[RMDB]
RNA sequence: GGGAACGACUCGAGUAGAGUCGAAAACAGCAACUGGUGCAGGCCGGCCAGCGAGUGCGCCGGCAGGAACAGGUCGCAAUAGGGCAGCGCCGCCGCCAUCGAACCGGCACGCGGCUGGAACUCCGGACAGCCAAUAGCCGUUCGCGGCUAUUGGCUGAAAAGAAACAACAACAACAAC
Reactivity to DMS in 0.01 (KOAc 150mM, MgCl2 10mM, bicine 150mM(pH8.5), 24C), signal-to-noise 2, nucleotides 027 to 126: c070a160g000c010a110a090c080u040g010g000u020g030c090a050g000g000c040c000g020g010c010c000a090g020c180g000a180g050u030g010c160g030c040c030g000g020c080a000g030g030a080a140c070a100g020g040u000c080g000c100a030a140u000a030g030g030g000c010a030g040c100g000c030c000g050c030c280g020c000c030a000u000c160g010a080a160c080c020g000g030c010a140c110g000c040g050g000c000u000g010g020a090a080c080u000c020c010g000g000a250
Reactivity to 2A3 in 0.01 (KOAc 150mM, MgCl2 10mM, bicine 150mM(pH8.5), 24C), signal-to-noise 2, nucleotides 027 to 126: c010a000g150c020a080a080c070u050g010g000u070g070c100a060g040g020c000c010g040g040c000c000a030g020c030g100a100g110u090g030c020g000c010c000g000g000c000a000g030g040a040a030c000a110g000g060u010c020g020c110a000a070u130a240g060g050g030c040a080g000c060g000c080c040g050c000c050g000c000c000a230u070c020g020a080a040c050c000g040g000c010a010c020g050c000g000g020c000u020g000g000a000a050c060u000c010c000g000g000a020
Source: RMDB library OK1LIB, as collected in RNAgym. Structure probing data (DMS and 2A3) for a 177-nucleotide construct. 2A3 adducts were read by reverse transcription with SuperScript II with manganese. The 2A3 profile rests on 960 reads. For DMS, 1,410 sequencing reads were counted.